[RMDB]
RNA sequence: GGGAACGACUCGAGUAGAGUCGAAAAGGCAGCAAGAGGUUCAUUUCGUGGUAUAGUUGACUAUACGGAAUUACCAUUGGUGUCGACCGAUUUUAACCAUGAUCCGCACAGUGCGAUUGUCGAUUGCCUCCACCUUGUCCUUCGGGACAAGGUGGAGAAAAGAAACAACAACAACAAC
Reactivity to DMS in 0.01 (KOAc 150mM, MgCl2 10mM, bicine 150mM(pH8.5), 24C), signal-to-noise 1, nucleotides 027 to 126: g010g000c030a010g000c000a010a010g000a200g030g000u020u000c160a030u010u000u000c000g050u020g040g020u000a030u000a030g010u000u040g000a050c040u000a020u000a020c000g020g000a010a020u000u000a040c010c010a140u010u000g000g000u000g000u000c010g010a270c050c010g020a090u010u000u030u030a100a100c050c100a080u000g000a060u000c050c020g040c020a090c110a080g010u010g010c080g000a110u000u010g040u000c070g000a120u000u000g000c270
Reactivity to 2A3 in 0.01 (KOAc 150mM, MgCl2 10mM, bicine 150mM(pH8.5), 24C), signal-to-noise 1, nucleotides 027 to 126: g020g000c020a010g010c010a050a030g150a200g020g080u110u080c060a030u100u000u000c040g030u100g090g020u090a060u040a190g070u030u300g200a190c010u030a000u020a110c030g000g040a040a010u070u020a020c000c000a020u010u030g120g000u010g100u000c020g040a030c030c000g020a010u000u070u120u220a040a020c030c050a070u110g000a010u000c000c000g000c000a030c060a150g200u100g120c010g030a080u030u170g020u000c070g050a090u000u200g070c030
An RNA of 177 nucleotides, treated with DMS and 2A3 and read out base by base.
For DMS the reverse transcriptase was MarathonRT.
For DMS, 1,138 sequencing reads were counted.
The reactions ran in a buffer of 150 mM KOAc, 10 mM MgCl2 and 150 mM bicine (pH 8.5), at 24 C.